An RNA of 207 nucleotides, treated with DMS and 2A3 and read out base by base. DMS adducts were read by reverse transcription with MarathonRT. For 2A3, 2,473 sequencing reads were counted. The data come from the RNA Mapping Database (RMDB), library PDB130. 2A3 is a SHAPE reagent: it acylates the 2'-hydroxyl of flexible nucleotides of all four kinds. 2A3 adducts were read by reverse transcription with SuperScript II with manganese. The RNA was probed in 150 mM KOAc, 10 mM MgCl2 and 150 mM bicine (pH 8.5) at 24 C.

RNA sequence: GGGAACGACUCGAGUAGAGUCGAAAAAGGAACUCGGCAAACUAACUACCGUAACUUAGGGAUAAGGAGAGCUCAUUAGUCUCGAUUAAUACGAGUAAAAAGGAAGAAGCAUGGAAUAUUGUUGUACGACUGUUUAAUUAAAACAAAGCACUUUGCAGCAUAUUAUUGUGUUCGCACAAUAAUAUGCAAAAGAAACAACAACAACAAC
Reactivity to DMS in 0.01 (KOAc 150mM, MgCl2 10mM, bicine 150mM(pH8.5), 24C), signal-to-noise 2, nucleotides 027 to 156: a010g020g030a080a110c040u020c070g030g030c030a080a090a160c090u000a070a140c000u010a020c040c000g020u010a070a070c030u010u000a070g050g020g000a070u000a060a110g020g050a070g010a040g020c060u000c030a130u010u010a120g020u000c020u000c050g000a200u000u000a110a120u000a120c000g020a060g000u020a030a060a060a060a050g000g010a060a070g000a040a070g000c040a030u000g020g000a080a100u010a070u000u000g030u010u010g020u000a080c060g010a120c080u000g020u000u000u000a090a130u000u010a030a010a070a070c040a020a050a070g000c020a100c080u010u000u010g030c070a180
Reactivity to 2A3 in 0.01 (KOAc 150mM, MgCl2 10mM, bicine 150mM(pH8.5), 24C), signal-to-noise 4, nucleotides 027 to 156: a000g030g000a030a010c010u010c050g040g020c050a080a080a110c040u110a020a040c040u060a060c030c050g070u080a040a060c000u030u130a030g020g000g040a030u030a110a010g030g000a020g020a010g030c020u020c110a090u050u100a070g070u010c010u010c030g010a020u000u130a060a060u120a140c020g010a000g040u080a000a080a060a010a010g010g020a020a060g010a030a000g020c060a010u100g060g020a080a040u100a050u100u060g010u000u020g020u030a040c040g050a070c110u010g070u040u040u070a080a140u080u140a040a080a020a000c060a050a120a000g000c000a030c060u080u090u170g010c070a040